An RNA of 177 nucleotides, treated with 2A3 and DMS and read out base by base. The 2A3 profile rests on 8,080 reads. For 2A3 the reverse transcriptase was SuperScript II with manganese. DMS (dimethyl sulfate) methylates the pairing face of unpaired adenines and cytosines. The DMS profile rests on 2,280 reads. The RNA was probed in 150 mM KOAc, 10 mM MgCl2 and 150 mM bicine (pH 8.5) at 24 C. DMS adducts were read by reverse transcription with MarathonRT.
[RMDB]
RNA sequence: GGGAACGACUCGAGUAGAGUCGAAAAGAGUCCUAUUUCGAUAGGACUCAACUAAAAUCAGCGGUAAAUAAUUAGCUGGCGUUACCGCUCAACGCCAGCAUACUAGCCUCGUCUUCGGACGAGGCAAGCUUCAUUCUGAAUUCGUUCAGAAUGAAGCAAAAGAAACAACAACAACAAC
Reactivity to 2A3 in 0.01 (KOAc 150mM, MgCl2 10mM, bicine 150mM(pH8.5), 24C), signal-to-noise 5, nucleotides 027 to 126: g000a000g000u000c000c000u000a020u010u100u060c170g100a020u010a010g010g040a000c000u000c000a000a010c000u060a020a010a020a140u100c040a030g050c020g130g090u130a070a120a130u150a080a240u220u200a080g000c000u000g000g000c000g000u010u030a100c040c020g010c050u030c040a000a000c000g010c010c000a000g000c010a000u030a010c030u050a040g000c000c000u000c000g010u000c010u020u050c230g090g000a000c000g000a000g000g000c000a000a000
Reactivity to DMS in 0.01 (KOAc 150mM, MgCl2 10mM, bicine 150mM(pH8.5), 24C), signal-to-noise 2, nucleotides 027 to 126: g030a010g010u000c000c000u010a000u000u000u000c120g020a020u000a000g000g010a020c000u000c000a030a100c050u000a040a040a050a090u000c110a040g010c020g000g020u010a060a060a050u010a090a090u010u010a090g000c000u000g010g000c010g000u000u000a100c010c000g000c030u000c060a050a020c000g000c000c010a010g020c000a050u000a030c180u010a090g010c000c000u000c000g010u000c000u000u010c210g000g000a020c000g000a010g000g040c020a000a000